[RMDB]
RNA sequence: GGGAACGACUCGAGUAGAGUCGAAAAGAUAUGGAAUGAAAUGGUUGCGAUAAGAAUUGUUCGGAAACGAACGGGUUCUUUUGACGCAACCACAUUCCUAAGUCAAAGUAGCGACUUCGGUCGCUACCGAGUGUACAACGUUCGCGUUGUACACUCGAAAAGAAACAACAACAACAAC
Reactivity to 2A3 in 0.01 (KOAc 150mM, MgCl2 10mM, bicine 150mM(pH8.5), 24C), signal-to-noise 3, nucleotides 027 to 126: g010a000u060a030u120g010g040a020a030u010g030a300a280a300u120g000g000u000u010g000c040g050a120u030a250a010g030a010a020u070u100g010u000u000c000g020g020a060a070a040c010g010a020a000c050g040g040g000u000u020c040u090u110u080u210g300a140c080g000c020a000a000c000c000a000c010a010u000u000c010c000u010a130a000g020u020c040a080a000a230g010u030a000g000c020g000a000c000u070u090c300g180g000u000c000g000c000u000a000c000
Reactivity to DMS in 0.01 (KOAc 150mM, MgCl2 10mM, bicine 150mM(pH8.5), 24C), signal-to-noise 3, nucleotides 027 to 126: g000a020u010a300u010g000g000a020a000u000g000a170a120a220u030g020g040u010u000g010c000g020a180u000a020a020g000a010a030u010u020g040u010u010c000g000g010a080a110a190c010g030a010a000c010g030g010g000u000u000c010u010u010u000u000g000a210c140g000c010a000a010c010c000a010c020a000u000u000c000c000u010a010a140g000u000c030a100a150a160g010u000a000g000c030g000a020c000u000u010c250g050g010u000c000g010c000u000a000c010

An RNA of 177 nucleotides, treated with 2A3 and DMS and read out base by base. Reactivities are given for positions 27 through 126. For DMS the reverse transcriptase was MarathonRT. The 2A3 profile rests on 5,371 reads. Reactivities are rounded to 0.1 and cut off at 0 and 3.